[RMDB]
RNA sequence: GGGAACGACUCGAGUAGAGUCGAAAAGAUGCAAUGAUGAGCGAAGUAUAGUCUGACCUGGUAUUGCCAUUGCUUUGGCGCUGGCUCUGACCAGGGUGUGACCCCUUAAUCUUCUCUCUGAGCUGAAACGAAAACCCUGCUUCGGCAGGGUUUUCGUAAAAGAAACAACAACAACAAC
Reactivity to 2A3 in 0.01 (KOAc 150mM, MgCl2 10mM, bicine 150mM(pH8.5), 24C), signal-to-noise 1, nucleotides 027 to 126: g060a020u160g040c080a120a190u180g040a020u030g010a000g000c050g090a010a000g060u060a040u270a230g000u000c040u100g230a300c000c000u000g040g000u060a050u020u120g000c000c000a100u000u020g050c140u000u080u300g210g010c060g000c000u000g000g000c020u000c040u050g090a010c000c000a000g090g020g000u160g130u090g020a030c010c010c000c000u040u050a120a060u140c000u020u000c040u030c040u000c060u000g000a030g000c030u010g020a030a230
Chemical mapping of a 177-nucleotide RNA with 2A3. The 2A3 profile rests on 319 reads. Values cover nucleotides 27 to 126.